[RMDB]
Structure probing data (2A3 and DMS) for a 177-nucleotide construct. 2A3 adducts were read by reverse transcription with SuperScript II with manganese. The 2A3 profile rests on 1,830 reads. The reactions ran in a buffer of 150 mM KOAc, 10 mM MgCl2 and 150 mM bicine (pH 8.5), at 24 C. For DMS, 1,094 sequencing reads were counted.
RNA sequence: GGGAACGACUCGAGUAGAGUCGAAAACUCAAGCGUCUUGCGGAGCUGGUGCAUCUGUCGCCAGAGCAUACGGAGAUGUUCAUCAUGACAAUGGUCACGAACAAGACCUUGUACGCGAAGAUGGACCGGCAUGAGUCAGUUUCGACUGACUCAUGCCAAAAGAAACAACAACAACAAC
Reactivity to 2A3 in 0.01 (KOAc 150mM, MgCl2 10mM, bicine 150mM(pH8.5), 24C), signal-to-noise 4, nucleotides 027 to 126: c020u010c010a010a080g100c020g020u020c050u120u190g040c080g110g000a100g070c020u030g010g040u010g000c000a110u050c080u250g280u200c000g000c030c000a070g010a010g010c030a020u120a110c040g100g000a110g030a060u100g000u000u040c030a060u010c010a090u220g010a010c020a010a080u280g040g010u010c020a000c180g060a240a040c160a140a020g000a000c040c000u010u030g040u040a090c030g010c030g090a040a000g000a000u000g040g010a030c040c040
Reactivity to DMS in 0.01 (KOAc 150mM, MgCl2 10mM, bicine 150mM(pH8.5), 24C), signal-to-noise 2, nucleotides 027 to 126: c000u000c000a060a250g000c040g000u000c120u000u030g000c010g010g000a060g010c060u200g010g050u000g000c030a140u000c230u000g170u140c040g010c050c140a020g020a010g000c010a040u020a190c000g000g010a060g040a150u000g020u000u040c000a090u060c040a220u050g000a000c010a000a020u010g010g000u030c000a170c180g040a120a260c230a160a010g000a050c040c000u000u000g000u000a010c180g000c090g000a170a020g000a030u000g000g000a020c070c160